[RMDB]
RNA sequence: GGGAACGACUCGAGUAGAGUCGAAAACAGCCUGCGUGAUCCAAAGAUGGAUUGCUCGUGUCUAUCUACGGGUCUUACCAUUUAACGAGCUACGUUUAACUACUUACCUUAAUAGUUAGAAAUAAGAUUCUUAGGUUAGUUUUGAUAGUUUAGCCCUUACAUUUUUAGCGUUCGCGCUAAAAAUGUAAAAAGAAACAACAACAACAAC
Reactivity to 2A3 in 0.01 (KOAc 150mM, MgCl2 10mM, bicine 150mM(pH8.5), 24C), signal-to-noise 1, nucleotides 027 to 156: c010a020g020c010c030u100g060c090g200u120g020a000u000c010c010a030a030a030g010a010u000g000g000a010u000u120g000c030u020c000g010u010g000u000c000u020a010u000c000u010a000c110g010g000g010u020c000u010u090a020c000c010a140u050u090u180a050a010c010g000a010g000c010u020a040c060g000u060u050u100a040a060c010u030a000c010u070u080a030c060c000u050u120a120a010u070a100g020u060u020a040g020a050a130a020u110a020a030g030a120u160u000c060u100u030a010g000g000u030u000a030g030u010u000u060u150g070a070u100a070g000u010u010u040a000g010c000c000c000u020
Source: RMDB library ARCHII, as collected in RNAgym. This 207-nucleotide RNA was probed chemically with 2A3. The RNA was probed in 150 mM KOAc, 10 mM MgCl2 and 150 mM bicine (pH 8.5) at 24 C. Values cover nucleotides 27 to 156. For 2A3 the reverse transcriptase was SuperScript II with manganese.